[RMDB]
RNA sequence: GGGAACGACUCGAGUAGAGUCGAAAAGGAGAGGGCGGACGGUCCUGAGAACUCUUAUCUUCCUGCUUAGAAGAGGAGUCUCCUGGACGCUUCCGCCCGCUCGGGAUGGGCCUCAGUGCCGACGAGGAGAGGUCGCGCUUCGGCGCGACCAAAAGAAACAACAACAACAAC
Reactivity to 2A3 in 0.01 (KOAc 150mM, MgCl2 10mM, bicine 150mM(pH8.5), 24C), signal-to-noise 4, nucleotides 027 to 129: g050g000a020g000a020g000g000g010c000g000g000a000c050g020g000u000c000c000u050g020a070g020a100a060c000u010c000u010u100a110u050c000u040u010c010c040u110g160c130u220u240a020g000a000a010g000a010g020g000a000g010u000c000u050c040c070u010g000g000a000c010g050c160u000u010c000c000g000c000c000c000g000c000u000c000g000g000g010a090u140g000g000g030c020c010u050c090a060g010u090g100c020c010g000a040c030g030a000g000g040a020g000a000
Reactivity to DMS in 0.01 (KOAc 150mM, MgCl2 10mM, bicine 150mM(pH8.5), 24C), signal-to-noise 2, nucleotides 027 to 129: g020g030a030g030a040g000g020g030c000g000g000a060c140g000g010u000c000c060u040g030a050g020a140a040c030u010c050u010u100a090u060c040u020u030c000c140u040g000c230u070u080a240g000a000a000g000a040g020g000a010g020u020c050u010c030c070u020g000g050a020c020g000c080u000u030c080c000g020c050c010c040g000c010u000c020g020g020g020a070u010g050g020g010c030c020u070c050a110g040u000g060c050c010g020a080c050g020a070g030g010a030g030a060